[RMDB]
RNA sequence: GGGAACGACUCGAGUAGAGUCGAAAAUUUUUCUUCCAGACACCCACUGCUCGAGGACGUCCUCCCUUCCCCCUCGAGCCUUCUUCGAGUCGGACCGGCUCAUCUCGGCAGAGGGCGGCAGUCCUGGCAUUUAUACGUCGUUCGCGACGUAUAAAUGAAAAGAAACAACAACAACAAC
Reactivity to DMS in 0.01 (KOAc 150mM, MgCl2 10mM, bicine 150mM(pH8.5), 24C), signal-to-noise 2, nucleotides 027 to 126: u010u010u010u020u020c080u010u000c030c080a270g010a080c050a120c100c040c160a260c020u000g000c000u000c010g000a030g000g000a150c040g000u010c040c040u010c000c010c020u010u010c010c010c010c010c020u000c020g000a070g000c020c020u010u010c050u010u010c070g020a020g020u010c040g000g000a190c110c070g020g000c020u020c040a100u000c020u010c070g030g010c100a190g020a070g000g000g020c060g020g020c090a060g010u010c040c020u000g010g010
Reactivity to 2A3 in 0.01 (KOAc 150mM, MgCl2 10mM, bicine 150mM(pH8.5), 24C), signal-to-noise 1, nucleotides 027 to 126: u070u090u030u040u060c040u120u080c040c010a080g020a040c010a050c000c030c030a080c030u010g000c010u010c010g000a010g010g120a210c020g040u010c010c020u020c000c000c000u030u000c000c000c010c020c010u030c000g020a050g000c000c000u040u060c010u080u050c090g000a000g010u040c020g030g080a150c030c030g010g000c000u000c000a050u040c060u010c040g000g000c000a000g020a000g000g010g000c040g030g000c010a010g060u020c030c030u030g060g000